Overview: Conditions: 150 mM KOAc, 10 mM MgCl2 and 150 mM bicine (pH 8.5), 24 C. The record gives the reactivity of an RNA of 177 nucleotides to 2A3 and DMS. For DMS, 1,547 sequencing reads were counted. For 2A3 the reverse transcriptase was SuperScript II with manganese.
[RMDB]
RNA sequence: GGGAACGACUCGAGUAGAGUCGAAAACUCUCGCGCAUUGAGGGGCUUGCCGACAACAUUGCCUUUCGUCUGGCUGCCAAGAGCGUGCGUAUCGUCGCGCCCAUCCCCGGUAAGCAGGCGGUGGGCGAGGAUUAGACGUCUUCGGACGUCUAAUCCUAAAAGAAACAACAACAACAAC
Reactivity to 2A3 in 0.01 (KOAc 150mM, MgCl2 10mM, bicine 150mM(pH8.5), 24C), signal-to-noise 1, nucleotides 027 to 126: c000u000c010u020c040g010c020g000c020a100u160u100g040a020g020g040g000g020c000u060u130g020c000c020g040a030c020a090a010c010a120u080u300g020c040c050u060u090u070c020g040u020c030u040g040g000c030u060g110c010c020a050a080g050a020g000c010g040u010g000c010g020u060a170u240c070g150u050c050g000c010g030c020c000c010a080u130c030c030c000c020g000g080u080a080a020g080c040a050g000g000c050g030g000u000g000g020g000c000g000
Reactivity to DMS in 0.01 (KOAc 150mM, MgCl2 10mM, bicine 150mM(pH8.5), 24C), signal-to-noise 2, nucleotides 027 to 126: c070u000c010u000c070g000c070g030c090a080u020u010g010a140g010g020g010g000c070u000u010g010c040c000g030a090c130a070a140c120a050u030u000g000c040c050u000u000u010c090g000u000c040u020g020g000c020u010g000c030c020a060a080g010a030g000c170g020u000g000c050g010u000a090u010c140g020u010c080g000c020g000c000c010c020a030u000c010c090c000c060g010g020u010a070a140g020c100a080g000g010c150g000g010u000g010g000g000c010g000